[RMDB]
RNA sequence: GGGAACGACUCGAGUAGAGUCGAAAAUCUAAGAACCAAUAAUACAGCCACAAUAGUGAUACCAUACAUAAACUCAGUACCCAUUGAUUCAAUGACACGUCACAACAAUGUCUCACUGAUGGUCAUCCAUGGCUAGGCGGUUCGCCGCCUAGCCAUGAAAAGAAACAACAACAACAAC
Reactivity to 2A3 in 0.01 (KOAc 150mM, MgCl2 10mM, bicine 150mM(pH8.5), 24C), signal-to-noise 2, nucleotides 027 to 126: u100c120u130a150a000g000a040a190c000c000a110a030u300a010a050u080a000c000a000g000c070c000a130c010a090a070u100a150g130u010g040a000u000a220c050c000a050u100a290c040a060u050a090a090a000c080u080c000a000g110u080a080c000c000c000a000u050u150g110a140u160u090c150a060a040u110g130a090c090a000c110g090u060c000a050c050a150a080c050a050a140u180g000u000c100u080c000a040c000u080g000a020u010g010g010u020c000a010u060c060
Annotation: This 177-nucleotide RNA was probed chemically with 2A3. 2A3 adducts were read by reverse transcription with SuperScript II with manganese. It was measured as part of the RMDB library OK1LIB.